[RMDB]
RNA sequence: GGGAACGACUCGAGUAGAGUCGAAAAGCAUAUGUGCGAAAGCAUAUGUGCGACCAUAUGCGAAAGCGUGUGGGAGGUAAGUACGUCUAAGCGCGUGACGUACCGUAGCACGAGUAGGGGCAAACGCCGCUAAGCGUGCGACGAAGGGGCGCGAACGACUUACAUAUAUGUUCGCAUAUAUGUAAGUAAAAGAAACAACAACAACAAC
Reactivity to 2A3 in 0.01 (KOAc 150mM, MgCl2 10mM, bicine 150mM(pH8.5), 24C), signal-to-noise 9, nucleotides 027 to 156: g000c000a000u010a000u020g020u010g020c030g100a090a030a010g000c000a000u010a000u010g010u000g000c000g000a010c000c000a010u010a010u020g010c020g050a100a020a020g000c010g010u010g000u010g010g020g030a080g060g080u130a090a020g000u000a010c000g000u000c020u060a180a070g010c010g000c010g020u020g000a000c000g000u000a000c000c000g010u010a010g000c000a000c010g000a000g030u010a000g020g060g020g000c030a250a210a080c210g000c000c010g060c220u000a010a000g010c000g000u000g000c000g000a000c000g010a030a040g080g040g030g000c010g000c010g020a020a020c060g020
Reactivity to DMS in 0.01 (KOAc 150mM, MgCl2 10mM, bicine 150mM(pH8.5), 24C), signal-to-noise 5, nucleotides 027 to 156: g020c010a020u000a010u000g040u000g000c020g010a220a160a300g000c010a020u000a000u000g030u000g010c010g020a070c020c010a030u000a010u010g000c000g000a150a090a180g030c000g060u010g060u000g000g000g010a130g020g010u000a050a110g010u000a010c010g000u000c010u000a050a120g020c050g020c030g020u000g010a030c000g020u000a020c010c000g020u000a050g020c010a040c020g000a040g000u000a030g000g010g040g030c030a090a130a160c250g030c000c010g000c020u000a020a030g000c030g020u000g000c020g000a010c030g010a140a120g010g010g020g020c010g000c010g010a080a120c040g000

An RNA of 207 nucleotides, treated with 2A3 and DMS and read out base by base. DMS adducts were read by reverse transcription with MarathonRT. The RNA was probed in 150 mM KOAc, 10 mM MgCl2 and 150 mM bicine (pH 8.5) at 24 C.